RNA sequence: GGGAACGACUCGAGUAGAGUCGAAAAGGCUCCUCUGCCGAUCCAUACUGCGGAACUCCUAGCCGCUUGUUUUGCUCGCAGCCGGUCUGGAGCAAAGCUCAUCGGAACUGACAAUUCUGUCGUCCUCAGGUACGAUGCAUUUCGAUGCAUCGUACCUAAAAGAAACAACAACAACAAC
Reactivity to 2A3 in 0.01 (KOAc 150mM, MgCl2 10mM, bicine 150mM(pH8.5), 24C), signal-to-noise 4, nucleotides 027 to 126: g020g010c000u030c000c020u080c050u050g010c010c020g020a010u010c020c010a090u110a100c040u080g010c010g020g050a070a070c050u110c050c040u020a100g030c030c020g000c000u020u060g020u000u030u000u010g020c010u000c040g300c030a030g020c040c080g260g040u090c010u040g010g000a010g000c000a010a020a000g000c030u050c020a030u050c020g020g000a040a040c020u060g020a040c030a090a150u160u060c040u080g010u010c010g000u010c000c000u030c020
Reactivity to DMS in 0.01 (KOAc 150mM, MgCl2 10mM, bicine 150mM(pH8.5), 24C), signal-to-noise 1, nucleotides 027 to 126: g000g000c020u010c080c100u000c080u000g020c090c000g000a020u010c200c120a160u280a050c090u000g000c030g000g060a100a170c140u080c090c120u070a060g000c060c020g000c040u060u020g000u000u000u000u000g070c000u000c060g000c040a000g000c010c210g000g000u010c000u010g000g000a050g050c020a000a040a090g000c000u020c240a050u000c060g000g000a070a050c000u070g000a110c100a060a180u000u000c000u030g030u000c020g010u000c000c000u010c070
Structure probing data (2A3 and DMS) for a 177-nucleotide construct. 2A3 adducts were read by reverse transcription with SuperScript II with manganese. Reactivities are given for positions 27 through 126. The DMS profile rests on 1,088 reads.